The data come from the RNA Mapping Database (RMDB), library OK3TST.
Structure probing data (2A3 and DMS) for a 207-nucleotide construct.
Reactivities are rounded to 0.1 and cut off at 0 and 3.
For 2A3 the reverse transcriptase was SuperScript II with manganese.
High 2A3 reactivity points to a flexible backbone, as in loops and unpaired stretches.
The RNA was probed in 150 mM KOAc, 10 mM MgCl2 and 150 mM bicine (pH 8.5) at 24 C.
RNA sequence: GGGAACGACUCGAGUAGAGUCGAAAAGUCAUGCCUUCGGGCAUGACAGGUACCGAGAGGUACCAAAUAGCGUACAGUAGACUCAGACUGUACGCUAAAAAAGUGUGUGUUCAAUAAGCCCCAAUUGAACACACACUAAAAUGGGGCAAGGGUGUAACGUUUUAUAAUUAUUCGUAAUUAUAAAACGAAAAGAAACAACAACAACAAC
Reactivity to 2A3 in 0.01 (KOAc 150mM, MgCl2 10mM, bicine 150mM(pH8.5), 24C), signal-to-noise 4, nucleotides 027 to 156: g010u000c000a010u000g000c010c010u070u090c250g050g000g000c000a000u000g000a000c010a000g000g000u000a000c010c010g010a010g000a020g080g000u000a000c000c000a030a030a030u060a000g000c000g000u000a000c000a010g010u050a070g140a290c080u050c190a030g030a050c000u010g000u000a000c000g000c000u010a010a020a000a010a000a020g010u010g000u000g000u000g000u000u000c010a020a020u060a120a110g020c010c000c000c010a010a030u000u000g000a000a000c000a000c000a000c000a000c000u000a000a000a000a020u140g010g000g010g020c050a070a040g100g020g020u070g030u070a120a040
Reactivity to DMS in 0.01 (KOAc 150mM, MgCl2 10mM, bicine 150mM(pH8.5), 24C), signal-to-noise 1, nucleotides 027 to 156: g000u000c000a020u000g020c010c000u020u010c300g010g070g020c010a010u010g000a000c000a000g000g030u010a010c020c020g000a270g000a300g050g020u000a010c010c020a000a050a070u000a010g000c020g000u000a010c010a010g050u000a050g010a090c080u010c080a200g000a160c010u010g010u000a000c010g010c000u010a000a020a030a100a070a010g000u020g030u000g030u000g010u000u000c000a010a000u000a020a070g000c040c010c020c040a050a010u000u010g030a010a010c010a000c020a000c010a000c000u000a010a040a070a070u010g030g000g050g010c090a130a110g000g030g000u000g010u000a100a220